Structure probing data (DMS and 2A3) for a 177-nucleotide construct. The RNA was probed in 150 mM KOAc, 10 mM MgCl2 and 150 mM bicine (pH 8.5) at 24 C. DMS adducts were read by reverse transcription with MarathonRT. It was measured as part of the RMDB library OK1LIB.
RNA sequence: GGGAACGACUCGAGUAGAGUCGAAAAUACUGCAUUCGACAGCACUUGAGAAGUAUCUGUCAAAUUUUCAGGUGAAUCCAUCGGGUACUUAAAAAUUUCAUGUGCAGAUUGCGACACCGCUGAUCGCCGUGAGCAUCCCUUUCGAGGGAUGCUCACGAAAAGAAACAACAACAACAAC
Reactivity to DMS in 0.01 (KOAc 150mM, MgCl2 10mM, bicine 150mM(pH8.5), 24C), signal-to-noise 1, nucleotides 027 to 126: u090a020c100u040g000c010a150u010u030c040g010a000c050a150g040c230a020c000u000u000g000a000g000a020a150g000u000a060u040c000u000g000u000c070a090a000a230u040u000u050u000c060a210g000g020u000g000a130a130u060c000c040a080u000c070g030g000g010u000a040c070u090u000a000a060a050a000a000u030u000u000c080a090u000g000u000g060c010a200g000a100u010u000g000c000g080a170c080a260c000c180g000c090u000g060a140u000c080g000c180
Reactivity to 2A3 in 0.01 (KOAc 150mM, MgCl2 10mM, bicine 150mM(pH8.5), 24C), signal-to-noise 3, nucleotides 027 to 126: u190a000c070u030g040c030a060u010u010c030g050a040c020a070g030c020a010c010u050u040g040a050g050a080a000g010u020a090u040c040u030g090u070c060a070a100a090u090u090u080u120c110a080g010g020u080g130a180a030u070c030c030a070u060c020g020g000g030u000a010c010u120u110a100a050a070a090a170u100u110u100c040a010u060g010u020g030c010a030g020a060u020u070g010c010g010a000c000a010c050c030g050c050u100g050a190u080c000g010c030